[RMDB]
RNA sequence: GGGAACGACUCGAGUAGAGUCGAAAACCUUUCCUCGUCAUCCUGGGUCAACCUCUUAAGUUCCUCUUCCUCCUCCUUGCUGAGGUUCUUCCCUCCCGCGCUGAGUUGAUUCUUCUUGUUCUUGAGGCUCGAGAGAUGUUCGCAUCUCUCAAAAGAAACAACAACAACAAC
Reactivity to 2A3 in 0.01 (KOAc 150mM, MgCl2 10mM, bicine 150mM(pH8.5), 24C), signal-to-noise 9, nucleotides 027 to 129: c000c000u010u050u030c010c010u040c020g080u040c030a090u040c010c030u060g020g010g010u040c020a070a110c040c010u070c010u100u150a110a040g020u050u030c000c000u020c000u050u030c010c000u010c000c000u040c000c000u040u040g010c040u030g030a060g030g000u040u010c000u020u030c010c000c000u020c020c000c000g030c010g010c050u060g030a020g050u040u030g080a150u050u000c000u040u000c010u030u050g030u060u020c000u020u040g040a030g050g010c030u040c130
Reactivity to DMS in 0.01 (KOAc 150mM, MgCl2 10mM, bicine 150mM(pH8.5), 24C), signal-to-noise 9, nucleotides 027 to 129: c000c000u000u000u040c040c020u020c030g020u030c030a050u030c010c040u000g040g000g000u000c070a090a140c100c050u040c070u040u020a080a110g030u020u010c010c000u000c030u010u000c010c010u000c050c010u000c030c020u000u000g020c030u000g010a140g000g020u020u020c060u020u020c040c020c020u020c010c000c030g010c110g020c030u010g020a140g010u000u000g020a110u020u010c020u010u020c070u010u010g030u000u000c050u000u000g000a070g020g000c070u020c060
An RNA of 170 nucleotides, treated with 2A3 and DMS and read out base by base. The reactions ran in a buffer of 150 mM KOAc, 10 mM MgCl2 and 150 mM bicine (pH 8.5), at 24 C. The data come from the RNA Mapping Database (RMDB), library 15KLIB. The DMS profile rests on 129,748 reads. For DMS the reverse transcriptase was MarathonRT.